Chemical mapping of a 177-nucleotide RNA with DMS and 2A3. For DMS the reverse transcriptase was MarathonRT. The reactions ran in a buffer of 150 mM KOAc, 10 mM MgCl2 and 150 mM bicine (pH 8.5), at 24 C. The 2A3 profile rests on 2,028 reads.
[RMDB]
RNA sequence: GGGAACGACUCGAGUAGAGUCGAAAAAUAAUCCGUAGCCAACACAUAAGCAACUUGAAGUAUGAAGGGUAUAUGUCUGAUGGAAAAUCGGCCCUGGUGAGUAGAGUAAUGGCGCCGGAGGGGCUCCUCUCCUUAAGGCAUUCGUGCCUUAAGGAGAAAAAGAAACAACAACAACAAC
Reactivity to DMS in 0.01 (KOAc 150mM, MgCl2 10mM, bicine 150mM(pH8.5), 24C), signal-to-noise 3, nucleotides 027 to 126: a060u040a070a060u010c000c020g000u010a070g030c010c000a040a070c300a060c070a050u020a170a150g040c100a110a060c020u000u010g010a100a130g000u000a070u020g010a120a020g000g010g000u010a090u020a100u030g010u000c040u040g020a050u000g010g000a050a090a060a050u010c020g000g020c000c000c010u010g000g040u000g000a060g010u010a080g000a070g020u020a080a190u020g010g010c010g040c090c040g010g030a100g000g040g010g020c090u000c010c020
Reactivity to 2A3 in 0.01 (KOAc 150mM, MgCl2 10mM, bicine 150mM(pH8.5), 24C), signal-to-noise 3, nucleotides 027 to 126: a000u120a010a030u020c020c010g000u020a000g010c000c020a040a000c020a060c050a150u240a120a050g020c060a110a050c020u070u100g050a100a000g050u100a090u210g090a070a050g110g070g030u090a060u000a040u220g180u080c100u110g070a050u030g020g140a090a040a000a050u050c020g010g000c000c000c000u000g000g000u040g020a040g010u050a020g000a000g020u070a080a090u050g000g010c000g000c000c020g040g000a020g010g030g040g000c040u030c000c000